[RMDB]
RNA sequence: GGGAACGACUCGAGUAGAGUCGAAAAUAACUUGCUCAUUGAGUUGAUGGCCAAACUGAAAUUAAAACCUAGGAGUUUUGACUGCAAGUCUGGGACACGGUGACCACAACAGCAGUUUCGUGGUAUAAAAUACGACCUCAUUCGUGAGGUCGUAUUUAAAAGAAACAACAACAACAAC
Reactivity to DMS in 0.01 (KOAc 150mM, MgCl2 10mM, bicine 150mM(pH8.5), 24C), signal-to-noise 2, nucleotides 027 to 126: u000a110a120c080u010u000g010c040u000c050a120u000u000g010a110g000u020u000g000a100u010g010g060c050c040a050a070a060c060u010g010a080a070a110u000u000a020a010a080a020c020c030u000a100g000g030a090g020u000u010u000u010g020a070c030u000g010c080a090a060g000u010c090u010g010g000g000a110c060a050c110g020g010u020g010a090c030c030a000c060a050a040c090a080g000c070a040g000u000u000u000c080g030u000g000g000u010a070u010a050
Chemical mapping of a 177-nucleotide RNA with DMS. It was measured as part of the RMDB library OK2TST.